[RMDB]
RNA sequence: GGGAACGACUCGAGUAGAGUCGAAAAGAGUGUGGAGUCUACACCAGUUGAACCUCCAACUGUAGAUGUGGUAGCACUUCAACAGGAAAUGACAAUUGUCAAAUGUAAGGGUUUAAAUAAACCUUUCGGUUAGAAGUUACUUCGGUAACUUCUAACCAAAAGAAACAACAACAACAAC
Reactivity to 2A3 in 0.01 (KOAc 150mM, MgCl2 10mM, bicine 150mM(pH8.5), 24C), signal-to-noise 2, nucleotides 027 to 126: g030a010g050u090g040u020g020g010a040g020u030c000u000a010c010a000c020c010a020g000u000u020g040a160a140c010c020u050c050c000a000a010c000u010g040u070a080g030a270u060g040u080g110g040u020a010g010c040a000c000u030u020c010a040a000c000a020g020g210a110a060a030u060g000a020c030a040a300u190u200g040u070c000a020a060a070u180g050u110a030a080g010g010g010u040u020u050a200a300a120u200a040a050a070c000c000u040u000u070c020
Reactivity to DMS in 0.01 (KOAc 150mM, MgCl2 10mM, bicine 150mM(pH8.5), 24C), signal-to-noise 1, nucleotides 027 to 126: g000a090g020u000g020u010g010g000a050g000u000c000u000a020c010a020c050c000a020g000u000u000g020a100a230c180c160u000c210c000a030a050c010u000g020u000a060g000a180u000g010u000g000g000u000a070g000c160a010c000u000u000c020a070a050c040a130g000g000a090a070a060u000g010a040c040a220a100u000u030g000u000c020a030a070a140u010g000u000a040a020g000g000g000u000u000u000a070a140a080u010a010a040a020c040c010u010u000u000c100